[RMDB]
RNA sequence: GGGAACGACUCGAGUAGAGUCGAAAAGAUAUGGAAAUGUACGCACUUUGAUCAUACUGCGUCGGAAACGACGUUAUGGGAGUGCUACAUUUCCUAAGUCAAAGAGUGAAGGUUCGCCUUCACUCAACCCAUAGUGACCGUUCGCGGUCACUAUGGGAAAAGAAACAACAACAACAAC
Reactivity to 2A3 in 0.01 (KOAc 150mM, MgCl2 10mM, bicine 150mM(pH8.5), 24C), signal-to-noise 1, nucleotides 027 to 126: g000a000u020a000u030g000g040a000a040a000u000g010u020a020c250g070c030a000c020u300u300u000g010a000u000c010a010u010a050c090u060g010c000g020u010c000g020g000a020a000a000c000g000a000c000g000u020u010a000u000g000g000g010a030g010u000g000c000u000a000c000a000u000u020u000c000c000u000a020a010g000u000c040a060a030a180g010a000g000u000g010a000a010g060g020u090u240c300g190c060c000u000u010c000a000c000u000c000a000a040
Reactivity to DMS in 0.01 (KOAc 150mM, MgCl2 10mM, bicine 150mM(pH8.5), 24C), signal-to-noise 1, nucleotides 027 to 126: g030a030u000a000u010g000g010a000a010a010u000g000u000a000c300g010c000a010c050u000u000u020g020a020u010c000a000u010a030c300u010g000c000g010u000c000g000g020a010a010a020c000g030a020c000g010u000u000a000u020g000g000g030a000g060u020g040c000u000a000c000a000u000u000u040c000c000u000a000a060g000u000c000a110a210a100g000a030g000u000g010a010a010g040g000u000u000c300g040c000c000u010u000c010a000c000u000c000a030a120